[RMDB]
Source: RMDB library OK2TST, as collected in RNAgym. The record gives the reactivity of an RNA of 177 nucleotides to 2A3 and DMS. For 2A3, 1,288 sequencing reads were counted. DMS adducts were read by reverse transcription with MarathonRT.
RNA sequence: GGGAACGACUCGAGUAGAGUCGAAAAUUGGCUACCUGCUCGGCCAGCUCCGGAUGGGCGCGGCCGGCAAAGAGCAUCAGGUUUUUGCGAUUAUCGGUCCAGUCGUGGCUCAACGCGCUGCCCUCGCGCGGCAGACUAAGUUCGCUUAGUCUGCCGCAAAAGAAACAACAACAACAAC
Reactivity to 2A3 in 0.01 (KOAc 150mM, MgCl2 10mM, bicine 150mM(pH8.5), 24C), signal-to-noise 2, nucleotides 027 to 126: u070u030g030g010c010u040a050c030c010u000g000c100u130c110g000g010c000c040a070g030c000u030c030c030g190g100a230u300g060g030g000c040g000c080g030g020c020c000g040g000c020a040a010a000g060a000g050c030a030u120c080a050g090g080u020u050u080u190u130g030c010g010a040u050u060a080u260c090g000g040u020c010c020a010g020u040c010g040u050g050g000c000u010c130a060a060c020g030c000g000c010u070g060c020c000c000u030c000g040c010
Reactivity to DMS in 0.01 (KOAc 150mM, MgCl2 10mM, bicine 150mM(pH8.5), 24C), signal-to-noise 1, nucleotides 027 to 126: u000u000g030g000c020u000a090c110c080u000g010c030u000c030g020g030c000c000a130g010c060u000c010c060g000g010a120u000g000g000g020c080g060c090g020g020c000c010g020g000c040a010a030a120g010a070g020c000a090u010c120a100g010g010u010u000u010u000u000g010c040g020a060u000u000a060u000c090g000g000u000c010c020a070g000u000c050g020u000g000g000c010u010c040a100a150c060g000c050g000c030u000g010c030c020c040u000c120g020c120